[RMDB]
Source: RMDB library OK2TST, as collected in RNAgym. This 177-nucleotide RNA was probed chemically with 2A3 and DMS.
RNA sequence: GGGAACGACUCGAGUAGAGUCGAAAACAGGGAGGGACAGAGGAGGAUUUCAUGUUUGCAGUAGUGGGUGCAGUGAUACCACUGUUCUGGGCCUCUUAGGGCACCUUUUCAUCAGAGCAUCUGCAAAGUACUGCGUCUUUUUCGAAAGACGCAGUACAAAAGAAACAACAACAACAAC
Reactivity to 2A3 in 0.01 (KOAc 150mM, MgCl2 10mM, bicine 150mM(pH8.5), 24C), signal-to-noise 1, nucleotides 027 to 126: c080a030g000g000g020a170g000g020g000a030c060a010g010a010g020g050a020g000g000a090u060u110u080c100a090u100g000u100u090u060g000c000a010g090u240a020g020u040g050g030g020u080g100c030a030g050u020g160a050u110a110c020c000a030c020u030g010u030u010c010u070g030g050g030c010c000u050c030u150u260a040g010g000g090c060a240c000c090u080u060u030u120c100a090u130c000a020g150a000g140c010a040u000c020u010g010c040a020a000a050
Reactivity to DMS in 0.01 (KOAc 150mM, MgCl2 10mM, bicine 150mM(pH8.5), 24C), signal-to-noise 1, nucleotides 027 to 126: c080a130g000g000g020a110g030g010g000a130c140a080g020a110g030g000a060g010g020a090u000u010u000c060a040u000g020u010u000u000g040c040a050g030u000a020g010u000g000g020g030u000g010c060a060g030u020g010a180u000a130c130c050a040c100u010g010u010u010c020u010g030g000g040c010c010u000c190u000u030a110g020g000g010c020a040c070c030u040u010u030u030c210a090u010c060a090g000a020g020c030a060u030c030u010g000c080a030a090a090
The 2A3 profile rests on 637 reads.